[RMDB]
Description:
This 177-nucleotide RNA was probed chemically with DMS and 2A3.

RNA sequence: GGGAACGACUCGAGUAGAGUCGAAAACAUGGUCCCAGCCUCCCCGCUGGCGCCGGCUGGGCAACAUUCCGAGGGGACCGUCCCCUCGGUAAUGGCGAAUGGGACCCAGAAAUCUCUCUAGAUUCCGCAUAUAGUGCUUGUUCGCAAGCACUAUAUGAAAAGAAACAACAACAACAAC
Reactivity to DMS in 0.01 (KOAc 150mM, MgCl2 10mM, bicine 150mM(pH8.5), 24C), signal-to-noise 4, nucleotides 027 to 126: c120a090u000g020g010u000c070c000c000a090g010c030c030u000c050c020c010c120g010c080u000g010g010c120g020c060c040g010g030c030u000g010g020g000c100a080a080c020a060u000u000c000c000g000a040g010g030g000g030a250c220c300g000u010c000c000c000c000u000c010g000g010u000a000a010u000g000g000c070g030a130a100u010g000g000g010a070c010c010c100a090g000a060a080a060u000c030u000c080u000c070u010a060g000a100u000u000c030c050g000
Reactivity to 2A3 in 0.01 (KOAc 150mM, MgCl2 10mM, bicine 150mM(pH8.5), 24C), signal-to-noise 3, nucleotides 027 to 126: c020a080u140g010g010u050c010c010c000a000g030c000c010u040c000c000c000c010g020c030u030g040g070c050g060c080c010g030g000c020u020g000g000g030c030a020a010c000a020u070u000c000c000g010a000g020g000g000g040a050c060c050g300u300c010c000c010c010u020c000g000g010u000a000a010u030g010g000c030g060a080a070u080g010g010g010a030c000c000c010a020g120a030a160a040u050c050u000c010u030c040u090a070g010a280u100u010c030c020g030
The RNA was probed in 150 mM KOAc, 10 mM MgCl2 and 150 mM bicine (pH 8.5) at 24 C.